[RMDB]
Source: RMDB library OK3TST, as collected in RNAgym. Structure probing data (2A3) for a 207-nucleotide construct.

RNA sequence: GGGAACGACUCGAGUAGAGUCGAAAACGAUCUGUUCGCAGAUCGAGCUACGGAGACGUAGCAAAGCACGCGAGACCUCCGGCGCGUGCAAUACCGGAAUUGUGACCAGAUCCACGUGUGCUAGGAUCUGGCGGAGGUCAUAGAUACAGCACACGAACCCAUAUCAGCCAUUCGUGGCUGAUAUGGGAAAAGAAACAACAACAACAAC
Reactivity to 2A3 in 0.01 (KOAc 150mM, MgCl2 10mM, bicine 150mM(pH8.5), 24C), signal-to-noise 4, nucleotides 027 to 156: c020g000a000u010c010u010g050u080u060c170g020c090a010g000a020u010c010g000a030g020c000u000a010c000g060g030a080g000a080c010g000u000a000g000c010a050a000a000g000c000a000c000g000c000g020a010g050a040c000c000u000c000c020g020g010c000g000c000g000u010g000c010a010a020u150a060c030c010g120g100a100a210u170u180g100u090g050a050c010c000a000g000a010u000c000c020a060c090g010u000g000u000g010c010u050a070g030g000a010u030c000u010g000g000c000g000g010a000g000g000u000c010a060u100a060g070a030u070a160c060a030g000c010a010c000a010c020g020a040a080
The RNA was probed in 150 mM KOAc, 10 mM MgCl2 and 150 mM bicine (pH 8.5) at 24 C. Values cover nucleotides 27 to 156. 2A3 adducts were read by reverse transcription with SuperScript II with manganese.